Structure probing data (2A3 and DMS) for a 177-nucleotide construct.
The 2A3 profile rests on 2,234 reads.
The reactions ran in a buffer of 150 mM KOAc, 10 mM MgCl2 and 150 mM bicine (pH 8.5), at 24 C.
The data come from the RNA Mapping Database (RMDB), library OK2TST.
Values cover nucleotides 27 to 126.
DMS adducts were read by reverse transcription with MarathonRT.
Values are in units of 0.01, from 0 to 300, in steps of 10.
[RMDB]
RNA sequence: GGGAACGACUCGAGUAGAGUCGAAAAUUUCGAGCUAUUCAUAUAUGGAAAUAGAUGGAGGAAACGCGCUGCAUUGACCUUGCGAGUUGGAAGUAUUUCAAGAGUACAAAUAGCUCAAGGUGGGGAACCUAAAAUGAGCAUUCGUGCUCAUUUUAGGAAAAGAAACAACAACAACAAC
Reactivity to 2A3 in 0.01 (KOAc 150mM, MgCl2 10mM, bicine 150mM(pH8.5), 24C), signal-to-noise 2, nucleotides 027 to 126: u070u050u070c050g010a010g000c010u010a010u060u100c060a050u120a070u060a080u260g080g070a030a020a010u080a040g150a130u040g080g040a060g010g030a060a030a020c010g020c010g000c040u030g000c040a070u100u160g040a070c010c010u000u010g020c030g040a020g040u000u010g020g050a080a050g060u020a020u010u030u000c060a100a050g050a000g130u020a000c010a010a120a010u020a020g000c010u010c030a010a000g040g000u060g000g010g020g030a020a020
Reactivity to DMS in 0.01 (KOAc 150mM, MgCl2 10mM, bicine 150mM(pH8.5), 24C), signal-to-noise 5, nucleotides 027 to 126: u000u010u000c090g020a070g000c010u000a040u000u000c050a110u010a110u010a090u010g010g010a040a060a040u010a030g010a110u010g010g010a100g010g000a100a050a050c090g020c050g000c050u000g010c070a140u010u000g010a080c110c080u000u010g000c050g010a060g010u010u000g020g010a090a130g020u000a030u010u000u000c100a070a110g010a110g020u000a040c070a040a040a090u010a040g010c020u000c000a050a080g010g020u000g010g010g020g020a110a170